[RMDB]
RNA sequence: GGGAACGACUCGAGUAGAGUCGAAAAACCUAACCCCAGAUCACUGCAAACGAAAUGUAUAUCACUAUUCACGCGUGGUUCCAAUUAUGGCGGCUAGAUGACGAAGGCUUGAUCAGCUACUGCUGUAUGCCCUAAUAAUGUUCGCAUUAUUAGGGCAAAAAGAAACAACAACAACAAC
Reactivity to 2A3 in 0.01 (KOAc 150mM, MgCl2 10mM, bicine 150mM(pH8.5), 24C), signal-to-noise 5, nucleotides 027 to 126: a020c020c000u020a040a030c010c000c000c000a010g000a030u050c010a000c030u070g010c030a050a040a070c070g130a100a070a060u140g090u040a060u020a010u140c050a020c060u070a080u070u080c020a020c060g050c020g030u050g020g010u070u030c030c010a050a020u210u060a110u170g040g010c010g010g030c020u010a000g010a080u030g000a030c030g040a040a010g070g020c020u030u100g050a030u090c000a000g010c000u030a030c060u150g010c000u030g010u060a060
Reactivity to DMS in 0.01 (KOAc 150mM, MgCl2 10mM, bicine 150mM(pH8.5), 24C), signal-to-noise 5, nucleotides 027 to 126: a070c010c010u010a080a200c050c010c010c020a110g020a070u010c040a050c020u000g000c040a050a090a120c160g000a060a060a100u000g010u000a060u010a070u010c090a090c050u000a100u010u010c050a050c090g020c080g010u010g000g000u000u020c030c040a070a090u010u020a040u020g000g000c040g000g010c130u010a030g010a030u010g000a030c030g020a080a100g010g000c080u000u000g010a080u010c050a050g010c030u010a060c100u010g000c020u000g010u010a120